[RMDB]
RNA sequence: GGGAACGACUCGAGUAGAGUCGAAAAUAGCGAAGUAGGAUUUCAUGCGUCAAGUGUUCACAGGCUGGGGAGUCGCCGUGAAACGAAAAGCAGAAAGCGUGCUGCUUACGAUAUAAUUUCCGCACCCAUAAGAAGUCUCUGUUCGCAGAGACUUCAACACCCAUCUUGCCUUCGGGCAAGAUGGGUGAAAAGAAACAACAACAACAAC
Reactivity to 2A3 in 0.01 (KOAc 150mM, MgCl2 10mM, bicine 150mM(pH8.5), 24C), signal-to-noise 1, nucleotides 027 to 156: u100a000g020c000g020a010a000g010u090a000g050g030a020u010u030u080c010a040u120g010c020g030u210c130a140a120g040u100g040u110u020c020a020c060a120g000g050c020u130g100g000g000g020a060g050u120c050g010c020c000g030u050g030a010a020a020c030g000a070a050a050a050g000c020a020g050a010a090a000g060c130g080u140g080c000u010g020c020u100u030a060c010g000a010u000a000u050a130a090u050u030u020c010c000g030c100a040c050c000c000a020u050a120a090g000a000a000g000u000c000u000c000u000g030u030u010c040g000c060a000g000a000g010a000c000u010u000c000a000a000